[RMDB]
RNA sequence: GGGAACGACUCGAGUAGAGUCGAAAAGAGAAAUUGUUCAGCAAGGGAAACAACAGGCACAAAGUCUAACGAAGUAAGAGCCAUUGCAUGGCAAUGGAACAGCAAGGCCAUUGUGGAUGGGGAAGCAAAAUCGUACUGCAUUCGUGCAGUACGAUUUAAAAGAAACAACAACAACAAC
Reactivity to DMS in 0.01 (KOAc 150mM, MgCl2 10mM, bicine 150mM(pH8.5), 24C), signal-to-noise 2, nucleotides 027 to 126: g010a100g010a030a050a100u010u010g000u010u020c050a050g030c060a100a050g000g010g010a110a060a040c080a030a070c060a050g010g000c010a060c090a030a080a090g020u000c050u010a060a140c080g010a050a050g010u020a060a050g010a180g010c020c030a010u000u000g020c020a190u000g000g010c000a010a020u000g000g000a040a060c120a070g000c110a060a030g000g020c020c030a070u000u000g040u000g000g010a110u000g000g000g000g000a090a090g000c140a030
Reactivity to 2A3 in 0.01 (KOAc 150mM, MgCl2 10mM, bicine 150mM(pH8.5), 24C), signal-to-noise 1, nucleotides 027 to 126: g090a000g050a000a120a030u110u070g030u090u090c020a010g010c040a040a090g000g010g060a030a120a060c000a000a000c050a090g030g000c010a020c070a140a050a060g000u000c030u010a110a020c040g080a050a000g040u130a000a080g030a010g060c030c010a010u010u050g020c050a080u110g120g000c030a020a020u030g020g000a070a020c050a010g070c030a060a040g070g000c040c000a000u020u100g060u040g050g030a040u070g020g000g000g050a000a020g060c050a020